[RMDB]
RNA sequence: GGGAACGACUCGAGUAGAGUCGAAAACAAUUUAGCUGCUAAAAAGCUAAAUAAUGCGACUAUAAAUGUUAAUGAUAGUCCAAUCAUAAAAUGCUUAUUUUUCAAUGAUGCCAUGAGCAGUGCCUCCCCGUACAGGCCAAUUCGUUGGCCUGUACGGAAAAGAAACAACAACAACAAC
Reactivity to DMS in 0.01 (KOAc 150mM, MgCl2 10mM, bicine 150mM(pH8.5), 24C), signal-to-noise 1, nucleotides 027 to 126: c020a120a090u040u000u000a000g000c000u000g010c120u120a080a080a060a140a050g020c030u000a000a000a000u000a110a060u000g000c150g050a020c020u020a040u010a090a080a100u020g000u030u050a070a060u000g020a020u000a020g040u050c000c120a230a000u000c090a030u020a070a020a040a020u040g000c120u020u000a040u020u000u020u000u020c070a080a100u020g070a020u000g040c070c080a180u020g000a070g040c070a050g010u000g000c000c030u000c040c030
Reactivity to 2A3 in 0.01 (KOAc 150mM, MgCl2 10mM, bicine 150mM(pH8.5), 24C), signal-to-noise 4, nucleotides 027 to 126: c010a000a000u020u020u030a010g000c000u040g030c070u300a130a050a110a070a040g010c020u020a010a020a020u070a000a060u070g040c060g020a000c020u060a000u150a160a200a050u210g110u290u200a190a030u110g080a010u010a000g000u010c010c060a030a020u060c060a020u150a110a080a100a000u090g030c000u030u030a050u090u130u060u000u100c140a140a120u240g050a060u120g030c000c020a050u110g050a000g040c030a030g010u000g110c000c030u010c000c020

Chemical mapping of a 177-nucleotide RNA with DMS and 2A3. For DMS the reverse transcriptase was MarathonRT. Reactivities are given for positions 27 through 126. The RNA was probed in 150 mM KOAc, 10 mM MgCl2 and 150 mM bicine (pH 8.5) at 24 C.